The record gives the reactivity of an RNA of 207 nucleotides to DMS and 2A3. 2A3 adducts were read by reverse transcription with SuperScript II with manganese. Values cover nucleotides 27 to 156. The data come from the RNA Mapping Database (RMDB), library RNAMAK. For DMS the reverse transcriptase was MarathonRT. The RNA was probed in 150 mM KOAc, 10 mM MgCl2 and 150 mM bicine (pH 8.5) at 24 C. The DMS profile rests on 2,649 reads.
RNA sequence: GGGAACGACUCGAGUAGAGUCGAAAAGCGUACUACUCGACGGGUCAUCGAUCGGUACGAUAUUCAGUAUAGUACACUCUCCCCACCCAUGUCCCAAAUAGGACAUGGAGGAGUGUACUAUACUGAAUAUCGUACCGGGAGACCGUCGAGUAUCGCACCCAUAGUAUCCGUUCGCGGAUACUAUGGGAAAAGAAACAACAACAACAAC
Reactivity to DMS in 0.01 (KOAc 150mM, MgCl2 10mM, bicine 150mM(pH8.5), 24C), signal-to-noise 1, nucleotides 027 to 156: g000c020g040u000a060c070u000a000c030u000c000g010a020c000g010g050g000u000c040a260u010c110g020a190u000c000g000g020u000a010c000g040a010u000a000u020u000c000a040g020u000a020u000a010g020u000a030c000a020c010u000c000u000c110c040c020c110a300c300c000c000a000u000g000u010c010c000c030a100a260a300u010a040g000g010a000c000a020u010g020g000a100g000g000a030g010u000g020u000a000c010u000a000u000a000c000u000g010a000a040u000a010u000c000g050u000a000c000c010g000g000g000a260g020a070c020c010g000u000c010g020a060g010u000a000u000c020g040c030a300
Reactivity to 2A3 in 0.01 (KOAc 150mM, MgCl2 10mM, bicine 150mM(pH8.5), 24C), signal-to-noise 2, nucleotides 027 to 156: g000c000g030u090a050c060u010a000c000u020c010g000a000c020g010g100g140u160c090a230u110c070g060a070u070c000g000g010u000a000c010g000a000u010a010u020u000c000a000g020u000a000u000a000g010u000a000c010a020c000u000c020u070c030c040c020c010a030c000c010c000a000u000g000u010c020c030c000a050a200a020u210a050g000g000a000c000a000u000g000g010a080g000g000a000g000u030g010u000a000c000u000a000u000a000c000u010g010a000a000u000a000u000c000g000u000a000c010c000g000g000g000a000g000a010c010c000g000u000c000g000a000g000u000a000u010c000g000c000a050